RNA sequence: GGGAACGACUCGAGUAGAGUCGAAAAGAUAUGGAACGUGUUCGACUUUUGACGGACGCUCAUCGGAAACGAUGAGACGUCCGAUAAGUCGACACGUUCCUAAGUCAAACCAUGCUUCGGCAUGGAAUCUUGUAGAUUAGUUCGCUAAUCUACAAGAAAAAGAAACAACAACAACAAC
Reactivity to 2A3 in 0.01 (KOAc 150mM, MgCl2 10mM, bicine 150mM(pH8.5), 24C), signal-to-noise 7, nucleotides 027 to 126: g020a010u080a040u160g000g000a000a000c000g010u020g090u300u190c020g020a010c020u120u110u170u300g290a180c040g000g010a000c000g010c010u010c000a010u010c000g030g020a070a060a060c010g000a000u010g000a000g030a020c000g000u000c000c000g000a000u000a000a000g000u000c000g000a000c000a000c000g000u000u010c000c000u000a010a000g000u000c010a010a020a100c000c000a000u000g000c000u110u120c300g160g000c010a010u010g010g020a010a130
Reactivity to DMS in 0.01 (KOAc 150mM, MgCl2 10mM, bicine 150mM(pH8.5), 24C), signal-to-noise 9, nucleotides 027 to 126: g010a050u000a300u000g000g010a000a000c000g000u000g000u010u010c010g020a020c000u000u000u000u010g020a270c130g010g000a020c000g010c000u000c000a000u000c000g000g000a170a110a220c010g010a020u000g000a010g000a100c000g020u000c000c000g020a020u000a000a010g010u000c000g000a010c010a010c000g010u000u000c000c000u000a000a070g010u000c040a150a170a260c000c000a000u000g000c010u000u020c220g030g010c000a010u000g000g000a050a050

The data come from the RNA Mapping Database (RMDB), library TTRDES. Structure probing data (2A3 and DMS) for a 177-nucleotide construct. In probing experiments dimethyl sulfate is read out at A N1 and C N3, which are open when not base-paired. Reactivities are given for positions 27 through 126. The reactions ran in a buffer of 150 mM KOAc, 10 mM MgCl2 and 150 mM bicine (pH 8.5), at 24 C. For DMS, 22,384 sequencing reads were counted. As a SHAPE reagent, 2A3 marks flexible, mostly unpaired nucleotides at the ribose 2'-OH. DMS adducts were read by reverse transcription with MarathonRT.